The record gives the reactivity of an RNA of 177 nucleotides to 2A3 and DMS. DMS adducts were read by reverse transcription with MarathonRT. The reactions ran in a buffer of 150 mM KOAc, 10 mM MgCl2 and 150 mM bicine (pH 8.5), at 24 C.

RNA sequence: GGGAACGACUCGAGUAGAGUCGAAAAUUGCAGCAUCACCAGUAGGUAAGAUGGGAUGAGCUCUCUUUACUUUCCAUUCAUGGGACUUCUGCUGGUUUGUUUAAGGAGGUAAAGAUUAAGGCCCAUGGAACGACAGGUUAUUCGUAACCUGUCGUUCAAAAGAAACAACAACAACAAC
Reactivity to 2A3 in 0.01 (KOAc 150mM, MgCl2 10mM, bicine 150mM(pH8.5), 24C), signal-to-noise 1, nucleotides 027 to 126: u140u090g000c010a000g000c000a060u120c000a020c030c000a030g080u090a020g120g080u040a080a030g080a100u040g020g000g050a060u040g030a010g000c000u010c000u000c000u080u010u000a010c050u220u130u020c030c030a070u060u180c040a110u100g010g030g060a020c040u160u100c040u110g030c020u060g050g110u110u110u100g110u050u160u070a040a040g010g000a020g030g000u010a070a100a000g040a000u050u140a050a020g020g020c020c020c000a000u040g040
Reactivity to DMS in 0.01 (KOAc 150mM, MgCl2 10mM, bicine 150mM(pH8.5), 24C), signal-to-noise 2, nucleotides 027 to 126: u000u000g020c020a040g060c070a070u010c030a060c010c020a060g000u000a070g010g000u000a090a080g010a060u000g010g000g010a060u020g020a160g010c100u010c080u000c000u000u000u000a010c030u000u000u000c000c000a120u000u020c100a040u000g010g000g000a060c060u000u020c050u000g000c070u020g000g000u000u000u000g020u000u000u000a080a060g000g000a070g010g000u000a020a020a050g000a100u000u020a090a100g000g000c000c000c010a060u020g020